Chemical mapping of a 207-nucleotide RNA with 2A3 and DMS. Values cover nucleotides 27 to 156. 2A3 adducts were read by reverse transcription with SuperScript II with manganese. The reactions ran in a buffer of 150 mM KOAc, 10 mM MgCl2 and 150 mM bicine (pH 8.5), at 24 C.
RNA sequence: GGGAACGACUCGAGUAGAGUCGAAAAGUACAUGUUGAACUAAAUUCUAUAGGUGAUGGCAUAGAGGAUCUUGCGAAUGGCUUGGAGCGGGUUGAGGAAGUAUUAUAUGAUACUGAUUCUUCCGAAAUGGACAAUGAAAAUAACUAAUCAUAUUUGAUCAGUACUUCCGAUUCGUCGGAAGUACUGAAAAAGAAACAACAACAACAAC
Reactivity to 2A3 in 0.01 (KOAc 150mM, MgCl2 10mM, bicine 150mM(pH8.5), 24C), signal-to-noise 2, nucleotides 027 to 156: g010u020a040c050a090u080g000u000u030g100a120a040c020u100a080a070a180u140u090c100u130a080u090a140g060g010u040g030a030u030g010g000c000a000u060a070g040a020g040g040a000u030c060u000u100g000c000g040a060a020u060g060g000c010u010u040g010g020a050g000c090g000g000g040u000u050g000a000g000g010a060a000g000u000a000u080u030a080u010a050u280g070a010u010a090c020u000g030a000u030u020c000u020u000c050c000g010a070a040a060u080g010g010a010c050a050a000u120g090a020a050a030a020u110a080a030c080u080a050a030u010c000a030u030a140u250u090u120g030a010
Reactivity to DMS in 0.01 (KOAc 150mM, MgCl2 10mM, bicine 150mM(pH8.5), 24C), signal-to-noise 1, nucleotides 027 to 156: g010u000a020c040a120u000g010u000u000g010a100a130c110u010a080a060a300u010u010c090u000a150u010a060g000g040u010g000a110u010g000g040c000a040u010a080g010a060g010g000a040u000c070u020u000g010c050g030a040a120u010g080g000c020u000u000g040g020a130g020c080g010g010g040u010u000g070a150g020g010a150a030g000u000a010u010u010a080u010a180u000g030a030u010a040c040u030g000a300u020u000c030u000u000c010c020g010a050a070a130u000g010g000a040c070a070a120u000g000a060a070a040a080u010a100a100c080u000a040a120u000c020a040u000a230u000u010u010g010a140